[RMDB]
RNA sequence: GGGAACGACUCGAGUAGAGUCGAAAAGGUGGCUCUUAGAGAGGAACUCCACAACCUGUGUCAGAGUCACCGAUUUAGCAUGUUCGUCCUACUAAGCUCGUGCUUACGAUGUAGGACGUUCAUGCGAGGGUACGAUUACCUUCGGGUAGUCGUACCCAAAAGAAACAACAACAACAAC
Reactivity to 2A3 in 0.01 (KOAc 150mM, MgCl2 10mM, bicine 150mM(pH8.5), 24C), signal-to-noise 9, nucleotides 027 to 126: g000g000u000g000g000c000u000c000u020u030a030g010a000g000a010g060g010a030a040c060u060c050c010a040c030a030a050c000c000u050g020u030g070u050c020a000g000a000g000u010c000a000c000c000g000a000u000u000u030a010g010c000a000u000g000u000u000c000g000u000c010c000u000a010c010u030a010a050g040c020u070c160g190u240g030c020u060u030a050c060g090a060u100g000u010a000g000g000a000c000g000u000u000c000a000u000g000c000g000a070
Reactivity to DMS in 0.01 (KOAc 150mM, MgCl2 10mM, bicine 150mM(pH8.5), 24C), signal-to-noise 6, nucleotides 027 to 126: g010g010u020g000g000c000u000c000u000u000a090g000a070g000a020g000g020a070a060c190u020c110c140a060c150a130a060c010c000u000g030u000g010u000c140a030g000a010g010u000c000a000c000c000g000a030u020u010u020a110g010c010a010u000g000u000u010c000g000u000c010c000u000a000c010u010a030a040g000c060u020c280g020u030g010c030u010u000a080c300g010a100u000g000u000a000g010g000a000c000g020u000u000c000a000u000g000c000g000a080